[RMDB]
RNA sequence: GGGAACGACUCGAGUAGAGUCGAAAAGCCAACGGUGACGUUGGCAACAUGAGGACUUCGGUCCUCAUGAGAGGACUUCGUGAGAAGUCCUCAGACGAGCGUGAGCUCGUCACGGCUCGUACGCGAGCCGAAGGUGUCGCGUGAGCGACACCAGCGUUCGGUGACGAACGCAACCUGUCCGCUUCGGCGGACAGGAAGCGUAAAUGUCGACUUGGAGGUUGUGCCCUUGAGGCGUGGCUUCCGGAGCUAACGCGUUAAGUCGACCUAGCUCUUACUUCGGUAAGAGCAAAAGAAACAACAACAACAAC
Reactivity to DMS in 0.01 (KOAc 150mM, MgCl2 10mM, bicine 150mM(pH8.5), 24C), signal-to-noise 3, nucleotides 027 to 266: g000c000c000a010a000c010g010g010u010g020a110c000g030u010u010g000g000c010a040a070c020a020u000g010a000g010g000a020c000u000u040c170g020g020u000c000c000u000c010a000u010g010a130g000a000g000g000a010c000u000u000c010g000u020g000a160g020a020a010g000u000c010c010u000c000a020g000a010c030g020a020g020c000g010u020g010a270g040c000u000c010g010u000c010a110c020g000g010c010u000c020g010u010a010c000g010c010g010a040g020c000c010g010a060a090g010g020u000g020u000c000g040c010g000u040g000a300g020c010g020a010c000a000c020c000a030g000c010g010u010u000c000g010g000u010g000a080c010g000a040a000c000g020c000a060a050c000c000u000g000u000c000c000g010c000u000u030c200g030g040c010g000g010a010c000a000g000g000a030a060g000c010g000u000a010a100a140u020g010u010c000g000a030c020u000u010g010g000a020g000g000u010u000g020u000g010c010c000c010u020u000g000a170g020g000c000g010u000g010g000c010u000u000c020c010g000g000a110g020c020u000a130a110c240g020c000g000u010u020a060a050g000u000c000g000a030c010c280u000a110
Reactivity to 2A3 in 0.01 (KOAc 150mM, MgCl2 10mM, bicine 150mM(pH8.5), 24C), signal-to-noise 6, nucleotides 027 to 266: g010c000c000a000a000c000g030g040u100g070a040c010g000u000u000g000g000c000a000a000c000a000u000g000a000g000g010a000c020u030u060c300g120g000u000c000c000u000c000a000u020g010a020g000a000g000g000a000c000u010u000c020g040u060g060a100g000a020a000g000u000c000c000u010c000a010g000a010c010g000a000g000c030g040u160g080a040g020c000u000c000g000u000c000a010c000g000g000c000u010c010g050u020a000c060g010c000g030a000g010c010c000g000a070a040g000g000u000g000u000c010g000c040g050u120g100a090g000c000g000a000c000a000c010c000a010g000c000g000u010u000c000g010g040u070g030a030c010g010a020a000c000g000c000a000a010c000c000u000g000u000c000c000g010c030u050u050c150g140g000c000g000g000a000c000a000g000g000a000a010g000c000g010u030a050a070a090u160g000u000c000g000a010c010u030u150g010g000a010g010g010u020u010g020u030g030c010c020c010u080u280g110a170g060g010c010g010u020g010g000c000u010u000c010c030g020g030a030g000c040u110a130a040c100g020c010g080u110u290a020a000g000u000c000g000a000c000c000u050a030
This 307-nucleotide RNA was probed chemically with DMS and 2A3. Values cover nucleotides 27 to 266. It was measured as part of the RMDB library POS240. The reactions ran in a buffer of 150 mM KOAc, 10 mM MgCl2 and 150 mM bicine (pH 8.5), at 24 C.